[RMDB]
RNA sequence: GGGAACGACUCGAGUAGAGUCGAAAAGAUAUGGACGUCGUACUACGCGAAGAACUCGGAAACGAGGGAGCGUUGUACGAGCGUCCUAAGUCAAACCAAGUACGUUGCUUCGGCAACGUACUUGGAAGUAUUCGCAUAGCUUCGGCUAUGCGAAUACAAAAGAAACAACAACAACAAC
Reactivity to 2A3 in 0.01 (KOAc 150mM, MgCl2 10mM, bicine 150mM(pH8.5), 24C), signal-to-noise 2, nucleotides 027 to 126: g040a000u090a060u110g040g000a010c000g000u030c010g000u000a010c040u050a010c020g080c010g280a300a050g010a100a040c000u010c020g040g020a080a050a040c020g010a000g030g000g040a030g000c000g010u000u000g010u000a010c000g030a000g000c010g000u010c000c000u000a020a010g020u020c030a040a030a040c010c000a000a010g010u000a000c020g000u000u000g010c000u000u190c270g110g000c000a020a000c010g000u000a000c010u010u000g010g000a010a040
Reactivity to DMS in 0.01 (KOAc 150mM, MgCl2 10mM, bicine 150mM(pH8.5), 24C), signal-to-noise 2, nucleotides 027 to 126: g010a100u000a300u000g010g000a020c000g030u000c000g000u020a010c000u000a030c020g050c010g000a150a150g000a080a210c000u010c000g000g000a110a100a280c020g010a020g010g000g020a080g000c000g000u000u010g020u000a010c030g020a050g010c030g010u000c000c000u020a000a100g010u010c070a170a130a170c000c000a000a000g000u000a000c000g020u000u000g000c000u020u000c190g030g000c000a010a030c000g000u020a000c000u010u000g020g000a020a120